Description: The record gives the reactivity of an RNA of 207 nucleotides to 2A3. Conditions: 150 mM KOAc, 10 mM MgCl2 and 150 mM bicine (pH 8.5), 24 C. It was measured as part of the RMDB library RNAMAK.
RNA sequence: GGGAACGACUCGAGUAGAGUCGAAAAGCCUAUGUUCGCAUAGGCCAUGACCUUUGUGUAAGCGAGUGUGUGGGAGCCUAAGCGCACCCAUUGGGUGCCCUUAGGCGAAGAACACACGGUCGCUUACACUCUGGUAGCUGCUUUGAUUCGUCAAAGCGUCUUAAUUCCCGUUCGCGGGAAUUAAGACAAAAGAAACAACAACAACAAC
Reactivity to 2A3 in 0.01 (KOAc 150mM, MgCl2 10mM, bicine 150mM(pH8.5), 24C), signal-to-noise 1, nucleotides 027 to 156: g000c000c000u000a000u010g050u020u090c270g000c120a000u000a000g010g010c030c020a110u180g090a000c000c000u000u020u000g000u000g000u000a010a000g010c000g060a300g300u020g000u000g000u020g000g000g040a020g010c000c010u000a000a000g000c000g020c020a000c000c000c080a150u110u290g000g000g010u000g000c030c020c000u000u000a010g030g000c000g000a000a010g000a000a000c000a000c010a000c000g010g020u000c000g020c020u000u000a000c000a000c000u000c000u010g040g010u010a080g040c110u080g040c000u020u000u000g030a030u120u040c140g010u000c190a010a030a020g020c030